Structure probing data (DMS and 2A3) for a 177-nucleotide construct. DMS adducts were read by reverse transcription with MarathonRT. The data come from the RNA Mapping Database (RMDB), library OK1LIB. The 2A3 profile rests on 418 reads. 2A3 adducts were read by reverse transcription with SuperScript II with manganese. The reactions ran in a buffer of 150 mM KOAc, 10 mM MgCl2 and 150 mM bicine (pH 8.5), at 24 C.
[RMDB]
RNA sequence: GGGAACGACUCGAGUAGAGUCGAAAAGAGUGGAGAGGACGCGGCGCAGCGAGCUAUCCAGGAGGAAUUCGCUUGCUACGAACGGUGUAAAGCUGUGGCCGUGUACAAAAGCUCCUGCAUGUUAGCAUCUCGGUGCAACGUUCGCGUUGCACCGAGAAAAAGAAACAACAACAACAAC
Reactivity to DMS in 0.01 (KOAc 150mM, MgCl2 10mM, bicine 150mM(pH8.5), 24C), signal-to-noise 1, nucleotides 027 to 126: g010a010g000u000g000g020a110g000a280g070g000a080c000g000c050g130g010c000g030c040a000g000c000g010a040g000c060u000a050u000c000c000a300g000g010a050g000g000a040a030u000u020c180g010c040u000u000g000c050u040a260c210g000a070a060c060g040g000u030g000u020a120a090a190g000c040u020g000u000g000g040c010c000g080u000g040u020a000c030a130a000a300a210g000c000u000c000c000u000g000c160a070u010g090u000u000a110g000c090a060
Reactivity to 2A3 in 0.01 (KOAc 150mM, MgCl2 10mM, bicine 150mM(pH8.5), 24C), signal-to-noise 1, nucleotides 027 to 126: g100a000g050u080g000g030a050g020a000g020g060a070c000g000c000g040g040c000g000c020a040g000c030g000a000g000c030u090a100u000c020c020a010g240g030a130g000g090a150a130u060u000c000g060c030u050u090g000c000u130a150c040g150a280a000c000g000g090u000g000u120a090a070a120g050c020u000g070u070g130g000c000c000g020u010g030u000a000c000a000a250a000a000g040c000u000c000c000u050g050c110a130u170g040u290u130a040g010c020a000